[RMDB]
RNA sequence: GGGAACGACUCGAGUAGAGUCGAAAAAGUUUGUUCACAAACUGCAUACAAUAAUGCGAUGUUUUGUGCAAAGCACAAAACUCGAAGAUAAACAGUGAGGCUGAAUUUCUGCCGAACUGUUUAUCUUACAAAACACUCGGUGUUCGCACCGAGUGAAACUAAGGGGAAGGUUCGCCUUCCCCUUAGUAAAAGAAACAACAACAACAAC
Reactivity to DMS in 0.01 (KOAc 150mM, MgCl2 10mM, bicine 150mM(pH8.5), 24C), signal-to-noise 1, nucleotides 027 to 156: a110g030u000u010u000g000u000u000c010a030c030a020a020a090c030u000g000c070a100u000a140c090a160a070u000a140a100u010g020c000g010a100u010g040u000u010u000u000g050u000g010c050a190a110a240g050c000a030c000a010a020a000a040c000u000c000g030a030a010g020a030u010a030a000a000c030a020g000u010g000a300g010g050c010u000g090a190a300u000u000u000c120u040g050c000c010g000a290a010c010u000g010u010u000u000a030u000c000u030u000a100c090a040a030a110a170c020a000c000u000c040g000g070u010g080u000u000c300g040c000a030c000c000g000a010g070u000g010a000a070